This 177-nucleotide RNA was probed chemically with DMS and 2A3. The data come from the RNA Mapping Database (RMDB), library TTRDEL. Reactivities are given for positions 27 through 126. For DMS, 4,939 sequencing reads were counted. For 2A3, 12,318 sequencing reads were counted.
RNA sequence: GGGAACGACUCGAGUAGAGUCGAAAAGAUAUGGAUUAGAACUACGAGUCGCUGCUCGAAGAACUCGGAAACGAGGGAGAGCAAAAGUCUCGCUAAUCCUAAGUCAAAACAGGUGUUCGCACCUGAAGACCAGAAUAAAGUUCGCUUUAUUCUGGUCAAAAGAAACAACAACAACAAC
Reactivity to DMS in 0.01 (KOAc 150mM, MgCl2 10mM, bicine 150mM(pH8.5), 24C), signal-to-noise 5, nucleotides 027 to 126: g010a040u000a300u000g010g030a020u010u000a010g000a120a080c140u010a280c050g010a020g020u000c030g010c290u000g010c000u000c000g000a100a110g010a130a200c010u010c010g000g010a120a070a160c000g000a010g000g010g000a090g010a020g010c010a030a030a100a120g000u000c010u000c000g000c010u000a000a010u000c010c000u000a070a100g010u010c020a070a050a130a140c020a010g000g000u000g010u010u000c170g010c000a010c000c010u000g000a090a080
Reactivity to 2A3 in 0.01 (KOAc 150mM, MgCl2 10mM, bicine 150mM(pH8.5), 24C), signal-to-noise 5, nucleotides 027 to 126: g000a010u060a020u100g000g000a010u020u020a010g020a190a130c160u180a040c300g010a000g010u020c020g020c210u040g000c010u020c020g140a260a100g020a140a090c010u000c010g000g000a050a030a020c000g000a000g000g050g000a080g000a000g000c000a010a150a080a060g010u000c010u000c010g000c000u000a000a000u000c000c000u000a100a000g030u020c020a000a000a090a170c010a010g000g000u010g060u090u130c270g050c100a010c000c000u010g010a020a020